[RMDB]
RNA sequence: GGGAACGACUCGAGUAGAGUCGAAAACGCUCCCAAAGCUGAGGAGCAGAAAAAAGACUCGUCUGGUCCAGCUAAGGUAGAGCCAGCGAUUACUCCAUCGGCACCACAACCAGUCACCACUGCUGAAGUAAUCAUCCCUGUUCGCAGGGAUGAUUACAAAAGAAACAACAACAACAAC
Reactivity to DMS in 0.01 (KOAc 150mM, MgCl2 10mM, bicine 150mM(pH8.5), 24C), signal-to-noise 1, nucleotides 027 to 126: c140g000c030u000c010c000c000a140a210a050g050c120u000g000a120g020g010a030g000c050a070g010a000a050a040a110a140a080g020a170c040u010c080g000u010c000u000g010g010u030c010c020a140g010c060u030a040a110g030g000u010a060g000a080g010c000c000a010g000c030g010a040u020u000a060c080u010c020c020a050u000c080g000g010c020a120c060c040a020c100a020a060c080c040a040g010u010c080a060c030c060a040c030u010g030c050u010g000a130a090
Reactivity to 2A3 in 0.01 (KOAc 150mM, MgCl2 10mM, bicine 150mM(pH8.5), 24C), signal-to-noise 2, nucleotides 027 to 126: c010g000c020u040c030c010c040a080a070a040g050c050u060g050a030g030g000a000g040c000a040g210a040a110a020a000a000a010g090a010c030u030c040g110u080c060u010g030g060u020c040c020a010g010c060u070a090a110g100g020u050a020g020a000g080c000c000a010g000c000g030a020u000u060a040c040u010c010c010a080u060c000g030g000c020a030c000c040a070c020a040a080c010c010a000g020u020c030a010c010c040a030c020u020g100c010u000g070a090a010